Structure probing data (2A3 and DMS) for a 177-nucleotide construct. DMS adducts were read by reverse transcription with MarathonRT. The RNA was probed in 150 mM KOAc, 10 mM MgCl2 and 150 mM bicine (pH 8.5) at 24 C. Source: RMDB library VIROID, as collected in RNAgym.
RNA sequence: GGGAACGACUCGAGUAGAGUCGAAAAUGACAGAGUGGUAUCAGAGCAGACUUGCUUUACAUCAAUGCCCAGCAGUUCACUCGAUGAUGCACAACUCCAGGGCCAGUGUCAAAAGUACCGCCCUGUGGUCCCCAAAUAAGUUCGCUUAUUUGGGGACAAAAGAAACAACAACAACAAC
Reactivity to 2A3 in 0.01 (KOAc 150mM, MgCl2 10mM, bicine 150mM(pH8.5), 24C), signal-to-noise 2, nucleotides 027 to 126: u160g020a020c040a040g090a000g050u070g000g030u060a040u080c010a030g000a010g070c030a020g080a190c060u100u080g030c000u070u080u110a030c000a020u090c020a090a210u120g040c050c000c000a000g000c000a020g030u030u050c030a000c120u010c040g060a130u130g020a010u000g030c060a050c020a120a110c020u030c030c010a020g000g000g010c040c080a070g000u010g010u070c030a060a150a070a090g020u030a020c000c000g030c010c000c000u000g000u000g030
Reactivity to DMS in 0.01 (KOAc 150mM, MgCl2 10mM, bicine 150mM(pH8.5), 24C), signal-to-noise 2, nucleotides 027 to 126: u000g020a080c090a060g010a060g050u000g000g000u000a040u000c060a070g030a040g050c020a170g010a080c080u000u020g030c030u000u000u000a090c110a110u000c200a090a110u010g030c050c020c100a100g010c100a030g000u010u010c090a120c000u020c060g000a120u010g000a050u010g000c040a020c110a070a070c030u000c080c040a080g000g000g020c020c140a080g030u020g010u000c060a050a090a080a210g020u020a020c010c140g020c000c000c000u000g000u000g020